[RMDB]
RNA sequence: GGGAACGACUCGAGUAGAGUCGAAAAGCUAACGGGCGUCAAUUCUGCAACCACUACGAGAUAUGUCUCCAUCUCACUUAUUAAUCGAAAUUGGUCGAUUUAAUACUUUUUUCCGGGCAUCCUCAGCUCGUGGACUAACCGCACCCAUGUCGGUAUCCUAUCCGUGCGUGUUCGCACGCACGGAUAGAAAAGAAACAACAACAACAAC
Reactivity to 2A3 in 0.01 (KOAc 150mM, MgCl2 10mM, bicine 150mM(pH8.5), 24C), signal-to-noise 2, nucleotides 027 to 156: g050c040u060a050a090c100g000g030g000c040g040u050c070a020a070u090u030c000u040g000c010a050a030c020c020a040c000u060a080c100g020a010g020a140u120a040u190g090u020c070u070c050c020a030u000c010u040c040a050c030u060u060a040u030u100a120a020u020c030g040a040a080a130u120u130g140g030u020c020g010a030u000u040u110a060a050u070a100c110u130u170u060u030u010u070c070c030g000g000g000c030a110u060c030c060u050c030a000g000c010u000c050g030u090g010g000a010c020u050a110a000c010c010g020c010a050c020c060c010a090u210g070u120c000g020g030u020a030u090c030